This 177-nucleotide RNA was probed chemically with DMS. Values cover nucleotides 27 to 126. The RNA was probed in 150 mM KOAc, 10 mM MgCl2 and 150 mM bicine (pH 8.5) at 24 C.
[RMDB]
RNA sequence: GGGAACGACUCGAGUAGAGUCGAAAAGAUAUGGAUGCAUCGCGAUAAGAUGUGGUCGGAAACGACCAUACAUCUUUUGACGCGAUGUCCUAAGUCAAAGGACUUUAGGCUUCGGCCUAAAGUCCAAGUUCCCCAGAUACUUCGGUAUCUGGGGAACAAAAGAAACAACAACAACAAC
Reactivity to DMS in 0.01 (KOAc 150mM, MgCl2 10mM, bicine 150mM(pH8.5), 24C), signal-to-noise 1, nucleotides 027 to 126: g020a010u000a240u010g010g030a060u040g000c090a000u000c010g000c000g020a110u010a020a010g040a030u020g020u010g020g020u000c000g050g000a050a080a080c010g050a000c010c000a110u000a070c120a030u010c000u000u010u010u000g000a250c060g000c010g020a010u000g000u010c040c000u010a050a100g010u000c050a110a110a140g000g010a000c010u020u000u000a010g010g000c000u000u000c240g030g020c000c000u000a000a000a050g000u000c000c000a000a030